An RNA of 177 nucleotides, treated with 2A3 and DMS and read out base by base. Values cover nucleotides 27 to 126. For 2A3 the reverse transcriptase was SuperScript II with manganese. The 2A3 profile rests on 796 reads. DMS (dimethyl sulfate) methylates the pairing face of unpaired adenines and cytosines. The RNA was probed in 150 mM KOAc, 10 mM MgCl2 and 150 mM bicine (pH 8.5) at 24 C.
[RMDB]
RNA sequence: GGGAACGACUCGAGUAGAGUCGAAAAUAAUCAAGAUGAAUCGUUUUUAGUUUGCUUGCUUACCUUACGGGCCAGCAUGAGAUCAACUUGAAUCUUUUUAUGUAGGCAGAUAGCGACGGAAUUUAAAAAUGCGUACUAGCUUCGGCUAGUACGCAUUAAAAGAAACAACAACAACAAC
Reactivity to 2A3 in 0.01 (KOAc 150mM, MgCl2 10mM, bicine 150mM(pH8.5), 24C), signal-to-noise 1, nucleotides 027 to 126: u150a000a060u050c010a010a000g030a030u030g070a030a290u030c080g010u000u000u000u160u160a110g010u060u090u040g000c000u000u020g040c000u000u040a150c000c030u000u000a000c180g000g000g000c000c000a040g000c000a030u060g080a090g050a030u090c030a090a280c150u060u000g030a030a080u010c060u000u060u000u000u000a050u050g030u100a020g060g000c000a000g050a100u030a040g020c010g000a020c010g000g010a090a080u110u120u000a290a300a010
Reactivity to DMS in 0.01 (KOAc 150mM, MgCl2 10mM, bicine 150mM(pH8.5), 24C), signal-to-noise 1, nucleotides 027 to 126: u020a100a250u000c090a080a050g020a060u000g020a000a020u010c100g000u150u000u090u000u050a090g000u030u000u000g050c020u020u000g010c060u000u010a120c140c020u020u070a150c120g000g000g020c090c030a110g000c020a040u000g000a030g000a020u000c000a040a120c060u140u010g000a000a100u070c010u050u040u000u000u000a040u110g010u000a060g020g020c120a040g000a090u000a170g000c030g000a050c050g000g000a060a030u000u060u080a000a200a040